[RMDB]
RNA sequence: GGGAACGACUCGAGUAGAGUCGAAAAGAUAUGGAGAAUAGCUUUGAUCUACAGUGUCGGAAACGACAUGUAGGGAGCUACUCCUAAGUCAAACAUCCAGAUGUGUGUUCGCACACAUCUGGAUGAAGAUUCUUCGUUCGUUCGCGAACGAAGAAUCAAAAGAAACAACAACAACAAC
Reactivity to DMS in 0.01 (KOAc 150mM, MgCl2 10mM, bicine 150mM(pH8.5), 24C), signal-to-noise 1, nucleotides 027 to 126: g030a040u010a300u020g000g000a000g000a120a070u020a010g010c000u000u010u010g030a030u020c000u000a000c000a030g020u000g000u000c000g020g000a140a080a200c000g010a010c000a030u000g000u000a000g000g000g000a010g000c010u010a010c000u000c000c020u000a030a090g000u010c020a090a250a270c000a010u000c000c000a010g000a010u000g010u010g000u000g010u010u030c250g030c000a000c010a000c010a000u000c000u010g010g010a000u000g000a000a060
Reactivity to 2A3 in 0.01 (KOAc 150mM, MgCl2 10mM, bicine 150mM(pH8.5), 24C), signal-to-noise 2, nucleotides 027 to 126: g020a000u040a030u140g030g050a020g050a300a300u070a010g030c010u300u240u120g020a070u030c000u000a000c000a270g290u040g000u190c030g020g110a040a040a100c020g000a010c000a010u010g010u010a000g020g000g000a000g040c000u020a020c000u010c000c000u030a180a040g040u070c070a150a030a010c030a000u050c010c000a010g020a010u000g000u010g000u020g060u050u130c300g020c090a000c030a000c000a000u000c000u000g000g000a010u000g010a040a000